[RMDB]
RNA sequence: GGGAACGACUCGAGUAGAGUCGAAAAUUCAAGCGAUUCGUCGCUUGAACCUGAGGAGAGUCAAGCAAAAUUGUUCCCUUUUGCUUUUGCUUUCCUCUUUUAAGUAGUAGUGCUUCGGCACUACUAAUACUAAGCAUUCGUUCGCGAAUGCUUAGUAAAAAGAAACAACAACAACAAC
Reactivity to DMS in 0.01 (KOAc 150mM, MgCl2 10mM, bicine 150mM(pH8.5), 24C), signal-to-noise 3, nucleotides 027 to 126: u000u000c000a000a000g010c010g010a020u000u010c210g030u000c000g020c000u010u000g000a000a030c030c020u010g020a010g000g000a010g010a010g020u000c300a030a020g000c000a000a010a010a020u010u010g010u000u000c000c000c000u000u000u000u000g010c000u000u000u000u010g010c010u000u000u000c000c000u000c010u000u010u000u010a070a160g010u000a010g020u000a000g010u000g000c000u000u010c210g020g010c000a000c000u000a010c000u000a010a070
Reactivity to 2A3 in 0.01 (KOAc 150mM, MgCl2 10mM, bicine 150mM(pH8.5), 24C), signal-to-noise 1, nucleotides 027 to 126: u030u000c000a000a000g000c000g000a000u000u130c210g060u020c000g140c000u010u010g000a010a020c010c000u000g020a010g040g000a020g000a010g010u100c070a010a010g000c000a000a020a060a020u180u280g000u020u030c000c000c000u000u010u000u000g010c020u110u030u040u170g010c000u000u010u010c000c020u000c000u020u020u010u030a060a000g000u010a000g000u000a000g000u000g030c010u020u050c190g070g000c000a000c010u000a010c000u000a000a000

Structure probing data (DMS and 2A3) for a 177-nucleotide construct. Values cover nucleotides 27 to 126. For 2A3 the reverse transcriptase was SuperScript II with manganese. It was measured as part of the RMDB library M2PK50.